Structure probing data (2A3) for a 207-nucleotide construct. Reactivities are rounded to 0.1 and cut off at 0 and 3. For 2A3, 511 sequencing reads were counted.
RNA sequence: GGGAACGACUCGAGUAGAGUCGAAAAUAACGUAAUCUGCAGACAGGGUGCUUUAGAGGAAGGGAUCAUUAAAUGAGAUGAUGAUGCAAAUAUAUUAGAAAACAAAUUGCCACUACAAGCUACAGAUAUUUUACUUCCAUUAAUUUCAUUAAUAGCAGACUGGUUUUCAUUUCGAUGAAAACCAGUCAAAAGAAACAACAACAACAAC
Reactivity to 2A3 in 0.01 (KOAc 150mM, MgCl2 10mM, bicine 150mM(pH8.5), 24C), signal-to-noise 1, nucleotides 027 to 156: u110a020a000c000g010u040a000a160u010c060u050g070c000a020g100a100c040a020g040g030g050u060g020c000u110u100u150a060g010a010g160g000a000a000g020g000g010a020u010c010a010u060u270a060a220a100u090g020a050g050a120u100g010a040u010g000a000u050g010c020a000a150a000u050a000u040a000u170u170a050g050a130a100a000a000c040a000a100a100u120u040g020c000c040a060c010u120a040c040a120a000g010c000u120a000c000a050g020a000u060a120u130u080u010u000a020c000u000u000c000c040a000u160u000a090a020u000u240u160c000a000u190u300a120a120u300a110g000c050a110